[RMDB]
The record gives the reactivity of an RNA of 177 nucleotides to 2A3 and DMS. The RNA was probed in 150 mM KOAc, 10 mM MgCl2 and 150 mM bicine (pH 8.5) at 24 C. It was measured as part of the RMDB library OK1LIB. For DMS the reverse transcriptase was MarathonRT.
RNA sequence: GGGAACGACUCGAGUAGAGUCGAAAAAUAAAAAGCAUAAAUAUGGUUUAGUAGAUUUUAGAAUAAAUCAUAAGCAACCAAUAAAUUUAAAAGUAUCUACCGUUUGAGCCAUGUGUGGGCGAAUAACCCCUAAUCACUAUUUCGAUAGUGAUUAGGGAAAAGAAACAACAACAACAAC
Reactivity to 2A3 in 0.01 (KOAc 150mM, MgCl2 10mM, bicine 150mM(pH8.5), 24C), signal-to-noise 5, nucleotides 027 to 126: a000u250a010a050a030a020a000g040c020a050u100a180a190a020u060a110u040g000g030u030u040u050a050g020u040a030g010a130u050u060u170u200a040g060a080a040u120a090a010a000u030c000a000u020a140a030g040c010a030a010c020c030a070a060u150a140a120a060u220u190u230a090a210a050a000g060u030a040u050c040u020a060c000c080g010u010u090u130g040a010g000c040c010a070u050g040u000g010u070g130g010g010c020g010a020a010u090a060a030c000
Reactivity to DMS in 0.01 (KOAc 150mM, MgCl2 10mM, bicine 150mM(pH8.5), 24C), signal-to-noise 2, nucleotides 027 to 126: a050u040a050a020a100a070a080g020c040a140u010a080a020a070u010a010u000g010g000u000u000u000a020g010u000a030g020a100u020u010u000u000a090g000a130a070u010a010a030a060u010c010a030u000a050a140g000c110a090a100c080c040a040a090u050a060a170a060u040u030u040a030a020a040a060g010u000a010u000c030u000a010c050c100g000u000u000u030g010a110g000c000c030a040u000g020u010g040u020g030g030g010c020g020a070a030u020a050a060c200